[RMDB]
RNA sequence: GGGAACGACUCGAGUAGAGUCGAAAAGAAAAGUGCACUUGUAGCACAAAUACAAGAAGAAAAGGUCAUGUGUAGACCAAAGACACAUAAAUAAGAGCAGUUGCAGCUCAAAUGCAACAAAAGAAAAGGGAUUCUAUUUCUUCGGAAAUAGAAUCCCAAAAGAAACAACAACAACAAC
Reactivity to 2A3 in 0.01 (KOAc 150mM, MgCl2 10mM, bicine 150mM(pH8.5), 24C), signal-to-noise 2, nucleotides 027 to 126: g130a000a140a050a050g030u020g000c010a000c160u000u080g020u090a000g000c060a030c200a050a070a040u100a010c000a050a050g070a100a000g100a110a070a000a000g000g020u020c010a170u060g040u000g020u100a040g020a030c000c000a170a000a000g030a000c000a000c000a000u170a120a250a000u230a170a050g000a000g010c060a030g000u000u000g050c010a050g000c000u090c160a000a010a010u140g010c050a020a020c010a080a160a000a000g040a020a000a000a180

Structure probing data (2A3) for a 177-nucleotide construct. The RNA was probed in 150 mM KOAc, 10 mM MgCl2 and 150 mM bicine (pH 8.5) at 24 C. For 2A3, 1,054 sequencing reads were counted. For 2A3 the reverse transcriptase was SuperScript II with manganese.